[RMDB]
RNA sequence: GGGAACGACUCGAGUAGAGUCGAAAACUUGCUGGAGACCUUCUAGAAUAUUGGGAAGCAGCCCUGCAGAACCAAUUGACUUAUUGUUUUAGCUGCCCAAAAUGGCAAUUGGAACUAUCUUGGGCCACUUGGGUAUGUUUUUCGAAACAUACCCAAGAAAAGAAACAACAACAACAAC
Reactivity to DMS in 0.01 (KOAc 150mM, MgCl2 10mM, bicine 150mM(pH8.5), 24C), signal-to-noise 2, nucleotides 027 to 126: c020u000u010g010c030u000g010g010a070g020a140c050c030u000u000c030u000a090g000a140a140u000a080u000u000g000g010g010a120a180g030c050a120g010c090c040c060u020g000c050a060g000a130a300c010c010a020a040u000u000g010a180c080u000u010a060u000u000g020u000u000u000u010a040g000c140u010g030c010c030c040a010a030a040a010u000g020g020c060a060a150u010u000g010g000a120a150c050u010a020u010c080u000u000g010g010g000c050c200a080
Reactivity to 2A3 in 0.01 (KOAc 150mM, MgCl2 10mM, bicine 150mM(pH8.5), 24C), signal-to-noise 2, nucleotides 027 to 126: c020u030u130g000c010u020g020g020a020g000a100c020c000u040u000c020u070a110g050a270a080u160a130u150u140g030g000g000a010a030g000c000a010g000c000c010c050u010g000c000a030g020a100a080c000c000a050a070u040u030g010a050c020u030u080a040u160u090g020u040u080u040u050a050g050c080u090g000c010c000c000a030a000a000a040u060g010g010c040a090a130u090u100g060g000a020a040c010u010a040u040c040u010u010g040g010g000c020c010a030

About this RNA:
The record gives the reactivity of an RNA of 177 nucleotides to DMS and 2A3. The reactions ran in a buffer of 150 mM KOAc, 10 mM MgCl2 and 150 mM bicine (pH 8.5), at 24 C. Reactivities are given for positions 27 through 126.